An RNA of 177 nucleotides, treated with DMS and 2A3 and read out base by base.
The 2A3 profile rests on 1,080 reads.
2A3 adducts were read by reverse transcription with SuperScript II with manganese.
2A3 is a SHAPE reagent: it acylates the 2'-hydroxyl of flexible nucleotides of all four kinds.
The DMS profile rests on 4,274 reads.
[RMDB]
RNA sequence: GGGAACGACUCGAGUAGAGUCGAAAAGAAAACAAGUACCGAGAACAUUGUUUUCGCUGCUUGGCGUUGCCGUUUUGUGUUGCAGUUGGUUGGGUAACGCCGCAAAUACCAACAGGAAAGAAAGAUAGCGGAGUAUAUAGUUCGCUAUAUACUCCGCAAAAGAAACAACAACAACAAC
Reactivity to DMS in 0.01 (KOAc 150mM, MgCl2 10mM, bicine 150mM(pH8.5), 24C), signal-to-noise 3, nucleotides 027 to 126: g010a060a060a140a080c050a030a010g010u000a020c130c040g020a080g000a070a050c010a190u030u070g010u000u020u000u000c010g000c180u010g010c010u000u020g000g000c010g000u020u010g000c000c000g030u010u010u010u020g020u000g000u010u000g010c070a090g030u010u000g010g010u000u010g010g000g000u000a020a070c280g000c000c000g020c050a030a040a060u010a080c010c030a010a040c080a090g040g000a080a070a090g000a070a120a040g010a200u020a090
Reactivity to 2A3 in 0.01 (KOAc 150mM, MgCl2 10mM, bicine 150mM(pH8.5), 24C), signal-to-noise 3, nucleotides 027 to 126: g050a000a000a000a000c010a040a000g030u020a010c030c090g050a020g020a050a050c170a300u100u290g010u000u000u000u000c030g000c010u030g020c010u070u130g000g000c020g010u010u010g010c010c000g040u060u040u260u080g170u030g030u010u090g060c070a110g030u010u070g040g000u050u080g050g000g000u000a010a000c000g010c000c000g000c000a040a080a000u180a060c040c000a020a080c000a030g060g050a110a020a060g130a080a120a010g160a100u240a020